[RMDB]
RNA sequence: GGGAACGACUCGAGUAGAGUCGAAAAUUAGAGGUCUCGAUCACAGCGAGACCGGGAGAGACGCUCCCGGGCCGGGUUAGGAACCGGUGCGGCGGGUGGUAUAGGAGCCCGCCGGACCCGGGGAUAACUUGCAUUAAGGUUUCGACCUUAAUGCAAGAAAAGAAACAACAACAACAAC
Reactivity to DMS in 0.01 (KOAc 150mM, MgCl2 10mM, bicine 150mM(pH8.5), 24C), signal-to-noise 2, nucleotides 027 to 126: u010u020a110g010a130g040g020u000c000u000c000g000a010u020c160a160c300a220g000c000g010a010g020a040c000c010g020g000g000a110g000a210g020a090c110g010c130u000c000c000c040g020g000g000c020c040g000g020g000u000u010a080g000g020a300a100c020c040g000g000u000g000c000g000g000c000g030g010g020u000g000g010u000a100u010a180g010g040a300g000c000c000c000g040c010c000g000g010a050c050c020c060g030g010g010g010a070u000a080a100
Chemical mapping of a 177-nucleotide RNA with DMS. The DMS profile rests on 937 reads.